The record gives the reactivity of an RNA of 177 nucleotides to 2A3 and DMS. Conditions: 150 mM KOAc, 10 mM MgCl2 and 150 mM bicine (pH 8.5), 24 C. Reactivities are given for positions 27 through 126. Source: RMDB libraries RFM100 and RFMREP, as collected in RNAgym.
RNA sequence: GGGAACGACUCGAGUAGAGUCGAAAAGGCAACUUGCCUCCGAUUGGGGGUGCUGUUUAUGUACGAACUUAUGUCUUUGGUUAUUGCCCCACUUUUUGUGGGUCUAGUAAUCUUACUAGUUGACCAUAACUUCACUGCAAUUCGUUGCAGUGAAGUUAAAAGAAACAACAACAACAAC
Reactivity to 2A3 in 0.01 (KOAc 150mM, MgCl2 10mM, bicine 150mM(pH8.5), 24C), signal-to-noise 6, nucleotides 027 to 126: g030g010c000a020a020c070u100u170g010c000c000u000c010c000g300a300u300u300g000g000g000g000g010u050g020c050u050g080u040u080u040a120u130g120u110a080c150g060a120a020c040u140u060a060u250g040u000c000u010u080u050g000g000u020u010a030u060u080g020c000c000c040c000a010c020u140u260u080u070u130g010u010g000g000g000u000c000u000a010g000u010a010a060u040c020u060u040a060c030u020a040g010u000u080g080a090c000c010a020u010
Reactivity to DMS in 0.01 (KOAc 150mM, MgCl2 10mM, bicine 150mM(pH8.5), 24C), signal-to-noise 2, nucleotides 027 to 126: g040g010c030a060a080c080u050u010g030c060c000u000c000c010g020a200u010u010g010g000g000g000g000u000g000c140u000g000u010u000u000a060u050g000u030a080c150g010a020a010c050u010u010a060u010g000u000c070u000u000u000g030g010u000u000a030u000u000g000c300c010c000c010a020c010u020u010u010u040u000g000u010g030g000g020u000c010u000a010g010u000a010a030u000c090u000u010a050c020u000a030g010u000u000g000a080c060c080a090u020